RNA sequence: GGGAACGACUCGAGUAGAGUCGAAAACCGCUACUCUUCGGAGUAGCGGAUACAUCUCGGGUCCGGGCCUUACCGUAGGACCAACGGUAAGGCCAGAGUUGAAGGGAGAGAUUUUCGAAUCUCUCAAAACCACUAAAAUAUUCGUAUUUUAGUGGUUAAAAGAAACAACAACAACAAC
Reactivity to DMS in 0.01 (KOAc 150mM, MgCl2 10mM, bicine 150mM(pH8.5), 24C), signal-to-noise 7, nucleotides 027 to 126: c000c000g010c000u000a000c000u000c000u000u010c200g030g010a020g010u000a000g010c000g000g000a020u000a040c140a100u000c010u000c010g010g000g010u000c040c080g010g020g010c000c000u000u000a000c000c000g010u000a020g010g020a100c150c150a020a020c000g000g000u000a010a010g010g010c000c000a010g000a050g010u000u000g010a100a130g010g010g010a020g010a010g000a030u000u000u000u020c150g010a030a030u000c000u000c000u000c000a030a050
Reactivity to 2A3 in 0.01 (KOAc 150mM, MgCl2 10mM, bicine 150mM(pH8.5), 24C), signal-to-noise 2, nucleotides 027 to 126: c000c000g000c000u000a000c000u010c010u030u090c290g120g000a000g000u010a000g000c000g000g000a000u010a010c020a060u050c010u000c010g040g000g020u010c030c010g040g010g000c010c010u000u000a000c000c010g010u040a060g060g240a080c010c030a000a010c000g000g000u010a000a000g010g000c010c000a010g000a000g020u100u210g080a110a040g070g050g000a000g000a010g010a010u010u010u060u050c070g060a030a010u000c000u010c000u000c010a000a040
An RNA of 177 nucleotides, treated with DMS and 2A3 and read out base by base. Reactivities are rounded to 0.1 and cut off at 0 and 3. It was measured as part of the RMDB library M2PK50. 2A3 adducts were read by reverse transcription with SuperScript II with manganese. For 2A3, 8,196 sequencing reads were counted. Conditions: 150 mM KOAc, 10 mM MgCl2 and 150 mM bicine (pH 8.5), 24 C. The DMS profile rests on 19,336 reads.